Conditions: 150 mM KOAc, 10 mM MgCl2 and 150 mM bicine (pH 8.5), 24 C.
This 207-nucleotide RNA was probed chemically with 2A3.
For 2A3 the reverse transcriptase was SuperScript II with manganese.
For 2A3, 527 sequencing reads were counted.
Source: RMDB library ARCHII, as collected in RNAgym.
Reactivities are given for positions 27 through 156.
[RMDB]
RNA sequence: GGGAACGACUCGAGUAGAGUCGAAAAUGCUGGUUGCCGUCCGUCGGCCAGCGGUUAACCUAAAACGGGCUGGUCCUUCGGUGCGCUUUGCACGCCGUGUUGCCGCGGGACGAGACCAAAACGGCGCGCUAAGCAUGUAGCGCCGGGGAUGUAGCGCGGGGAUAAACUUGUUCGCAAGUUUAUCCCCAAAAGAAACAACAACAACAAC
Reactivity to 2A3 in 0.01 (KOAc 150mM, MgCl2 10mM, bicine 150mM(pH8.5), 24C), signal-to-noise 1, nucleotides 027 to 156: u100g000c000u000g000g000u010u000g020c000c010g050u010c010c010g000u010c000g010g000c000c000a000g030c010g080g000u170u130a050a070c010c000u000a030a030a030a030c000g050g040g000c010u000g040g000u010c000c060u300u300c070g000g000u010g000c040g000c010u000u020u080g000c000a000c020g020c010c000g010u030g000u050u140g090c070c020g020c220g200g000g090a200c000g000a040g040a020c110c000a010a120a000a000c000g020g010c000g000c000g040c080u150a000a000g000c010a010u240g140u300a170g020c050g000c010c030g010g070g000g000a010u040g210u180a020g060c100g000c030